[RMDB]
RNA sequence: GGGAACGACUCGAGUAGAGUCGAAAAUAAGCGUGAAUCAUAGUACACCGAGGGUCCACAUCUUCGUGUUGCUGUUCGCAGCAAUAUUCGGAUAACCCUCUCGGUGUCUCCAUUGAGCACAAACAUUGUAAGGUACUUAGUUCGCUAAGUACCUUACAAAAGAAACAACAACAACAAC
Reactivity to DMS in 0.01 (KOAc 150mM, MgCl2 10mM, bicine 150mM(pH8.5), 24C), signal-to-noise 2, nucleotides 027 to 126: u000a110a100g020c190g000u000g000a100a100u000c000a020u000a060g010u000a010c010a000c010c000g000a010g000g000g000u010c080c130a110c300a030u000c020u000u010c180g000u000g020u000u000g000c000u000g000u010u000c260g010c010a000g030c000a020a010u000a010u020u010c100g000g010a010u000a090a110c190c070c010u010c030u000c000g010g020u000g010u000c100u000c050c090a100u000u000g020a030g010c010a010c020a060a080a140c170a050u000u000
Reactivity to 2A3 in 0.01 (KOAc 150mM, MgCl2 10mM, bicine 150mM(pH8.5), 24C), signal-to-noise 3, nucleotides 027 to 126: u180a030a030g100c030g050u020g030a100a120u030c010a020u020a030g040u070a010c000a000c000c000g000a000g040g000g020u090c090c050a080c010a130u020c000u020u020c020g030u010g000u010u010g000c010u030g030u050u080c290g000c090a010g000c000a010a000u000a030u030u040c020g000g000a000u000a030a030c010c000c000u040c010u010c010g000g000u000g000u000c000u020c000c010a040u020u050g020a010g000c020a010c020a020a100a020c050a100u010u040
Chemical mapping of a 177-nucleotide RNA with DMS and 2A3.
Values are in units of 0.01, from 0 to 300, in steps of 10.